RNA sequence: GGGAACGACUCGAGUAGAGUCGAAAAGCGCAGCGCAAACUAUGGAGUUUGAAAAGGCAGCUGAGUACCGCGACUUGAUUCAGUCCAUUGGCACCUUACGAACCAAGCAGCGGGUUAUGGCCAAGGAAAUGCUAGCCACUUUCGAGUGGCUAGCAUUAAAAGAAACAACAACAACAAC
Reactivity to DMS in 0.01 (KOAc 150mM, MgCl2 10mM, bicine 150mM(pH8.5), 24C), signal-to-noise 1, nucleotides 027 to 126: g020c060g000c020a000g010c040g000c010a000a000a000c120u010a280u060g050g000a070g000u070u000u000g010a050a190a180a080g000g000c000a140g040c010u010g010a070g010u000a170c050c080g000c010g000a170c020u000u000g060a130u000u040c050a110g010u000c000c040a120u000u000g000g000c020a150c000c120u010u000a190c060g010a050a020c020c030a000a070g010c300a040g000c000g020g000g050u000u030a010u020g000g050c020c060a100a040g020g020a040
Reactivity to 2A3 in 0.01 (KOAc 150mM, MgCl2 10mM, bicine 150mM(pH8.5), 24C), signal-to-noise 1, nucleotides 027 to 126: g030c060g020c170a020g000c100g020c050a000a000a090c000u030a160u300g190g000a100g000u080u030u030g050a090a050a060a070g140g020c000a000g000c000u040g030a030g000u000a030c010c000g010c040g000a000c100u060u100g000a000u180u060c000a030g000u000c000c000a150u040u080g020g020c100a160c050c000u040u060a000c100g040a020a000c020c000a020a030g060c000a000g000c020g000g030g000u000u110a140u060g020g000c020c000a130a080g130g000a000
Chemical mapping of a 177-nucleotide RNA with DMS and 2A3. For DMS, 1,332 sequencing reads were counted. Conditions: 150 mM KOAc, 10 mM MgCl2 and 150 mM bicine (pH 8.5), 24 C.